RNA sequence: GGGAACGACUCGAGUAGAGUCGAAAAAACGGAACGAUAGUGAAAACAAUCACGAAUGACCAAAUUGAAGUCACUAAUGCUACUGAACUGGUUCAGAGUUCCUCAACAGGUGGAAUAUGCGACAGUCAAGGACUCUAAGUUUCGACUUAGAGUCCUUAAAAGAAACAACAACAACAAC
Reactivity to DMS in 0.01 (KOAc 150mM, MgCl2 10mM, bicine 150mM(pH8.5), 24C), signal-to-noise 4, nucleotides 027 to 126: a080a070c100g000g010a020a060c020g030a050u020a050g010u010g000a070a060a070a050c270a090a070u010c020a040c050g030a090a080u010g010a090c040c030a020a070a110u050u000g000a090a050g020u000c030a040c080u010a060a080u020g030c040u000a030c030u000g000a080a150c090u020g010g000u020u000c040a050g000a160g010u010u000c000c010u000c110a040a070c120a060g000g040u030g000g000a070a010u030a110u030g010c060g000a080c070a050g000u020c070
Reactivity to 2A3 in 0.01 (KOAc 150mM, MgCl2 10mM, bicine 150mM(pH8.5), 24C), signal-to-noise 3, nucleotides 027 to 126: a000a000c080g060g070a060a000c070g010a050u080a110g010u020g080a000a000a010a120c090a090a130u050c000a020c090g070a030a030u110g030a040c060c010a070a060a010u160u210g060a110a000g050u000c020a000c080u080a100a050u200g110c070u070a060c040u030g020a190a020c000u030g170g060u070u080c010a000g000a030g050u000u000c030c000u030c010a100a290c140a060g170g010u100g010g010a010a070u050a060u210g010c030g010a040c020a010g040u110c040